An RNA of 177 nucleotides, treated with 2A3 and DMS and read out base by base. For 2A3 the reverse transcriptase was SuperScript II with manganese. High DMS reactivity at an A or C suggests that its Watson-Crick edge is free. It was measured as part of the RMDB library RFM100.
RNA sequence: GGGAACGACUCGAGUAGAGUCGAAAAACAGCAAAAACAAGCAAAUAUCUCCAGAGGGGAUUAGUCACAUUGCUUCAAAGUUAACAAAAACAAAGAGAGCAGAGGCAGCUUCACUGGGAACAACACCUCCCCCUCAAAUAUUCGUAUUUGAGGGGGAAAAAGAAACAACAACAACAAC
Reactivity to 2A3 in 0.01 (KOAc 150mM, MgCl2 10mM, bicine 150mM(pH8.5), 24C), signal-to-noise 3, nucleotides 027 to 126: a000c060a010g110c100a120a020a050a050a000c100a140a000g080c010a000a060a070u140a050u030c090u000c010c000a020g050a090g010g040g000g030a110u080u110a070g000u010c000a020c020a130u030u070g000c000u030u020c020a070a070a050g020u040u100a090a080c040a080a140a040a010a000c050a030a190a030g050a020g010a020g020c000a030g000a060g020g000c020a010g000c010u010u010c000a020c040u010g010g000g000a020a020c040a000a050c010a070c000c020
Reactivity to DMS in 0.01 (KOAc 150mM, MgCl2 10mM, bicine 150mM(pH8.5), 24C), signal-to-noise 2, nucleotides 027 to 126: a040c100a080g020c070a000a040a010a050a120c160a070a050g010c040a100a000a070u070a060u000c050u010c040c010a090g000a060g010g000g000g010a030u020u000a050g010u030c000a110c160a100u030u000g000c040u000u000c060a030a090a160g000u010u000a040a100c200a020a030a060a060a000c050a070a060a090g010a070g000a020g010c000a000g000a100g050g020c000a060g000c040u000u000c010a060c060u020g060g000g000a030a080c150a070a050c150a040c170c040